[RMDB]
RNA sequence: GGGAACGACUCGAGUAGAGUCGAAAAAGGGCAGGGUGAAAUUCCCGAUCGGCGGUAAAGUCCGCGAGCCGAACGAAAAAGGAUUGGCAGGAACCGGUGAGAUUCCGGUACCGACAGUAUAGUCUGGAUGACCACUUCAGCUUCGGCUGAAGUGGAACACUAUGCCAUGGUUCGCCAUGGCAUAGUGAAAAGAAACAACAACAACAAC
Reactivity to DMS in 0.01 (KOAc 150mM, MgCl2 10mM, bicine 150mM(pH8.5), 24C), signal-to-noise 2, nucleotides 027 to 156: a120g020g020g020c010a070g020g030g050u000g000a080a250a170u000u010c000c000c000g020a090u000c010g030g070c010g040g010u000a160a160a070g030u000c020c010g030c020g010a300g010c000c010g000a120a300c080g010a050a040a100a220a090g000g020a140u000u000g000g020c020a120g010g010a040a040c020c030g020g030u000g000a300g000a300u000u000c010c030g000g020u010a040c020c000g000a090c000a090g010u000a180u000a060g000u010c010u000g000g020a170u010g000a130c010c000a010c000u000u000c000a000g000c010u000u010c300g060g000c000u000g030a000a010g020u000g000g000a030a040